[RMDB]
RNA sequence: GGGAACGACUCGAGUAGAGUCGAAAAGCAGUUAGUCGAGCGUACGUAUUCACCCGAUACAGUAGGUUACGAGCUUAUUCGUGAUCUGAUCUCUGUAGUCCGUGCUCGGAAGUAUGCCGAAGCGACCGAAACCCGGAAGCUUCGGCUUCCGGGUUUCAAAAGAAACAACAACAACAAC
Reactivity to DMS in 0.01 (KOAc 150mM, MgCl2 10mM, bicine 150mM(pH8.5), 24C), signal-to-noise 1, nucleotides 027 to 126: g010c040a090g010u010u000a080g030u000c030g020a060g000c050g010u010a040c060g010u010a120u010u000c110a180c060c000c080g000a130u000a010c030a020g020u000a020g010g000u000u000a000c020g020a020g000c300u000u000a160u000u000c020g000u000g000a010u000c000u000g000a090u000c190u000c010u020g030u000a020g010u000c030c040g030u000g020c060u000c030g000g020a070a070g000u000a110u000g000c000c000g010a060a090g050c060g050a160c110c140